[RMDB]
RNA sequence: GGGAACGACUCGAGUAGAGUCGAAAAGCAGUCGGCUUCGGCCGACUGCAAAUUGAUGGGGCUACUAGAACAAAAACUAGAACAUAGAUCUAGUGUAGUUCAAAAUACGGGGGUUCGCCCCCGUAAAACGAUAAACAGGAUUCGUCCUGUUUAUCGUAAAAGAAACAACAACAACAAC
Reactivity to 2A3 in 0.01 (KOAc 150mM, MgCl2 10mM, bicine 150mM(pH8.5), 24C), signal-to-noise 2, nucleotides 027 to 126: g010c000a000g010u020c020g030g020c090u130u230c300g030g020c040c010g030a000c000u020g000c000a000a000a000u050u070g030a050u120g000g000g050g000c010u010a030c020u050a100g080a130a020c050a030a140a050a030a050c010u020a020g010a050a020c040a140u280a080g090a120u020c020u010a020g000u010g010u050a040g010u000u000c010a040a020a020a040u100a020c020g000g010g000g020g030u020u040c160g070c000c000c000c010c020g010u000a020a000a010
Reactivity to DMS in 0.01 (KOAc 150mM, MgCl2 10mM, bicine 150mM(pH8.5), 24C), signal-to-noise 4, nucleotides 027 to 126: g020c010a010g020u010c000g020g010c010u000u020c240g040g020c010c010g020a010c000u000g020c000a000a050a040u000u010g010a100u010g010g000g000g030c140u000a040c090u000a110g000a030a040c070a060a110a100a140a030c010u000a010g000a020a080c090a200u000a120g010a110u000c000u000a000g000u010g000u010a190g010u000u000c010a080a080a100a160u000a010c010g000g010g020g000g020u000u010c180g010c010c000c000c000c000g000u000a010a010a060

Conditions: 150 mM KOAc, 10 mM MgCl2 and 150 mM bicine (pH 8.5), 24 C. The record gives the reactivity of an RNA of 177 nucleotides to 2A3 and DMS. For DMS the reverse transcriptase was MarathonRT. High DMS reactivity at an A or C suggests that its Watson-Crick edge is free.